[RMDB]
RNA sequence: GGGAACGACUCGAGUAGAGUCGAAAAAAAUGCGUCAAGUACAUCAAAAGAGGAAACAGAGGGAAAGAACCAGGUUGGCAAACAAGCAAAAAGGCAAGGACGAACCUUCCUCAAGCACUGAAUGUUUCAUAUCUAGGGAAUUCGUUCCCUAGAUAUGAAAAGAAACAACAACAACAAC
Reactivity to 2A3 in 0.01 (KOAc 150mM, MgCl2 10mM, bicine 150mM(pH8.5), 24C), signal-to-noise 7, nucleotides 027 to 126: a000a000a030u120g010c020g020u020c040a060a020g060u050a080c010a060u080c060a030a060a080a050g090a030g010g050a030a070a010c050a040g030a050g050g010g010a030a100a050g040a020a010c010c010a020g060g000u030u040g040g000c010a020a050a080c020a050a040g030c020a020a070a020a000a010g040g000c070a020a010g030g010a040c040g020a040a070c000c000u020u030c000c000u030c030a030a040g030c020a020c090u070g060a110a060u180g030u020u010u000
Reactivity to DMS in 0.01 (KOAc 150mM, MgCl2 10mM, bicine 150mM(pH8.5), 24C), signal-to-noise 4, nucleotides 027 to 126: a040a040a090u010g020c030g020u000c040a060a030g020u020a060c080a070u010c080a060a070a070a070g000a080g000g000a080a060a070c090a040g010a070g000g000g010a050a070a060g020a020a100c080c050a040g000g000u030u010g010g000c090a020a070a100c110a040a070g010c050a010a090a060a060a040g010g000c110a040a030g000g020a120c150g000a060a100c020c010u000u000c010c000u000c050a070a090g000c060a070c140u010g000a070a080u010g020u010u010u000